[RMDB]
RNA sequence: GGGAACGACUCGAGUAGAGUCGAAAACAGGAUCAUUUGUGACAGAUGACGGACAGAUUAUUGAAAAGGACGACGAAGGAAAACCGCUUGGACCAGAUGGACAGGUACUAUCAACCGAUGAUUCUGGUGUGCUGAUUGAAUUCGUUCAAUCAGCACAAAAAGAAACAACAACAACAAC
Reactivity to DMS in 0.01 (KOAc 150mM, MgCl2 10mM, bicine 150mM(pH8.5), 24C), signal-to-noise 3, nucleotides 027 to 126: c030a010g000g000a050u010c000a040u010u000u000g010u000g010a070c120a060g010a100u000g010a100c060g000g010a110c070a050g000a070u020u000a110u000u020g000a060a050a100a120g010g010a060c030g010a120c080g030a080a090g020g010a080a030a070a090c070c060g000c120u000u010g020g010a070c040c010a090g010a090u010g000g010a110c160a080g000g010u000a040c080u000a080u010c090a090a030c040c020g030a050u000g000a090u000u000c010u010g030g020
Reactivity to 2A3 in 0.01 (KOAc 150mM, MgCl2 10mM, bicine 150mM(pH8.5), 24C), signal-to-noise 2, nucleotides 027 to 126: c010a000g000g040a030u020c010a020u010u070u100g040u030g070a000c030a060g050a070u080g060a040c040g060g010a020c000a040g090a060u100u060a100u200u300g100a060a100a030a010g040g000a010c060g000a020c070g040a030a090g060g020a040a060a040a080c010c030g060c050u020u040g000g000a050c000c030a050g040a170u120g040g000a010c010a040g000g020u040a040c010u040a030u090c000a050a010c010c030g000a010u030g000a020u020u000c010u010g010g040

An RNA of 177 nucleotides, treated with DMS and 2A3 and read out base by base.
The 2A3 profile rests on 2,013 reads.
The data come from the RNA Mapping Database (RMDB), library OK2TST.
For DMS, 1,815 sequencing reads were counted.
For 2A3 the reverse transcriptase was SuperScript II with manganese.
The reactions ran in a buffer of 150 mM KOAc, 10 mM MgCl2 and 150 mM bicine (pH 8.5), at 24 C.